[RMDB]
Record summary
The record gives the reactivity of an RNA of 177 nucleotides to DMS and 2A3. For 2A3 the reverse transcriptase was SuperScript II with manganese. DMS (dimethyl sulfate) methylates the pairing face of unpaired adenines and cytosines. The reactions ran in a buffer of 150 mM KOAc, 10 mM MgCl2 and 150 mM bicine (pH 8.5), at 24 C.
RNA sequence: GGGAACGACUCGAGUAGAGUCGAAAAGUUCAAUUGGUCACUCAUGUAAUAAUGAAACUCUAGCAAUGUUCUAAAUUCUUCGGGGUCUCUAGACAGUAACUCUGUUAAGUUUUGGUCAAACAAAGAACAUUACCCAUCCGUUCGCGGAUGGGUAAUGAAAAGAAACAACAACAACAAC
Reactivity to DMS in 0.01 (KOAc 150mM, MgCl2 10mM, bicine 150mM(pH8.5), 24C), signal-to-noise 2, nucleotides 027 to 126: g000u010u010c030a070a020u030u000g010g000u000c050a060c040u000c060a050u000g010u000a110a050u050a140a030u000g020a130a070a060c050u000c020u000a060g010c100a010a090u020g000u040u020c010u020a000a040a080u050u040c010u010u030c000g000g000g010g000u000c020u000c030u000a140g010a040c050a030g000u010a090a120c150u030c010u010g000u000u030a010a100g040u010u010u030u010g010g010u010c060a110a090a000c050a060a140a210g020a010a050
Reactivity to 2A3 in 0.01 (KOAc 150mM, MgCl2 10mM, bicine 150mM(pH8.5), 24C), signal-to-noise 4, nucleotides 027 to 126: g050u030u020c020a050a050u110u070g030g000u040c010a020c020u000c010a050u020g030u100a090a040u100a110a030u120g090a100a200a060c040u060c080u060a040g000c050a120a150u080g030u010u030c020u120a090a160a070u130u010c020u020u050c030g030g000g000g040u000c000u010c000u010a080g020a100c010a010g040u080a030a020c020u000c010u120g030u050u090a070a090g050u000u010u070u120g070g000u020c040a020a050a050c010a020a170a060g050a070a000